Chemical mapping of a 207-nucleotide RNA with 2A3. Values cover nucleotides 27 to 156. The RNA was probed in 150 mM KOAc, 10 mM MgCl2 and 150 mM bicine (pH 8.5) at 24 C. For 2A3 the reverse transcriptase was SuperScript II with manganese. The data come from the RNA Mapping Database (RMDB), library RSTRND.
RNA sequence: GGGAACGACUCGAGUAGAGUCGAAAAACCGGCAGUGAGUUAAUUCACAUGAAAUCGCGCUUGUCCGGGUCGCUUGGGCAGGUGCUAAAUCCAAGGCGGCUCGGCGAAAUCCAGCCUGUUCGGCGGGCGUGAUGGAGCUUAAAGCUUAAAAACACCGCUCUAGUCUAAACUUCGGUUUAGACUAGAGAAAAGAAACAACAACAACAAC
Reactivity to 2A3 in 0.01 (KOAc 150mM, MgCl2 10mM, bicine 150mM(pH8.5), 24C), signal-to-noise 1, nucleotides 027 to 156: a000c000c020g070g000c040a010g050u070g030a000g020u070u240a120a210u300u260c080a060c030a050u080g050a000a140a000u030c010g000c010g040c040u110u130g060u170c010c010g010g000g000u010c000g000c000u000u020g000g000g000c060a110g160g130u090g090c040u080a050a050a020u020c010c000a030a000g070g000c010g000g000c000u000c000g010g000c000g000a020a000a020u050c040c000a030g050c010c010u110g110u200u030c020g050g020c000g000g010g000c000g000u010g020a020u030g030g010a000g010c000u080u180a220a060a000g000c000u030u090a040a120a000a000a000c040a030c000c050g040